RNA sequence: GGGAACGACUCGAGUAGAGUCGAAAACUGGGCUGGUUCUAAAAUCAUUGCUGUUAUCUACAGCGGCAGGGAGUCUCUAAUAUUCCCAUCGGGAACCUAUUACUGUGUCACCACUAAGGCUAAGUCCGGGUACUUUAUAGUUCGCUAUAAAGUACCCAAAAGAAACAACAACAACAAC
Reactivity to DMS in 0.01 (KOAc 150mM, MgCl2 10mM, bicine 150mM(pH8.5), 24C), signal-to-noise 2, nucleotides 027 to 126: c070u000g030g000g030c030u000g000g000u000u000c040u000a050a090a090a090u010c150a080u010u010g010c010u000g000u000u000a090u010c170u000a050c050a030g010c030g000g000c080a060g010g000g010a040g010u000c050u000c060u000a060a100u000a120u000u000c010c000c010a130u000c170g000g000g000a030a040c110c080u000a050u010u000a040c060u000g000u000g000u000c030a070c030c010a090c080u010a110a080g010g000c020u000a070a120g010u000c080c040
Conditions: 150 mM KOAc, 10 mM MgCl2 and 150 mM bicine (pH 8.5), 24 C. Chemical mapping of a 177-nucleotide RNA with DMS. DMS adducts were read by reverse transcription with MarathonRT. The data come from the RNA Mapping Database (RMDB), library 15KREP.